[RMDB]
This 177-nucleotide RNA was probed chemically with 2A3 and DMS.
For DMS the reverse transcriptase was MarathonRT.
For 2A3 the reverse transcriptase was SuperScript II with manganese.
In probing experiments dimethyl sulfate is read out at A N1 and C N3, which are open when not base-paired.
RNA sequence: GGGAACGACUCGAGUAGAGUCGAAAAUCGCGCAUCAUCGCGCGCGCCGGCCGGCCGGCUGGGCGCUCGUCGAGGCGCCCGUCGAGCUCGCGCCCGCGCUCGCCCGGCUCGACGACGCGAACGCGUACCCCUGAUAUACUUUCGAGUAUAUCAGGGGAAAAGAAACAACAACAACAAC
Reactivity to 2A3 in 0.01 (KOAc 150mM, MgCl2 10mM, bicine 150mM(pH8.5), 24C), signal-to-noise 2, nucleotides 027 to 126: u050c010g000c010g010c040a050u080c010a020u080c100g010c000g000c010g000c000g020c060c000g030g010c010c020g000g000c010c050g050g000c070u180g050g000g020c000g000c020u010c030g300u090c080g050a270g030g010c000g000c020c010c000g010u020c010g020a070g020c060u110c090g000c090g040c000c020c000g020c000g040c030u060c020g000c000c030c000g030g010c050u070c070g070a070c030g020a020c010g030c010g050a160a050c060g020c030g050u130a110
Reactivity to DMS in 0.01 (KOAc 150mM, MgCl2 10mM, bicine 150mM(pH8.5), 24C), signal-to-noise 3, nucleotides 027 to 126: u000c030g010c030g030c000a100u010c110a120u010c110g010c050g020c100g010c030g010c020c140g000g000c030c040g010g020c070c060g020g000c040u010g030g010g010c010g020c000u010c040g020u020c190g000a210g010g000c010g010c030c010c000g030u000c010g000a090g020c030u010c070g000c180g010c020c010c110g010c070g010c020u010c060g030c110c050c070g000g000c080u020c050g010a030c030g010a060c020g000c000g000a050a070c070g010c020g000u010a260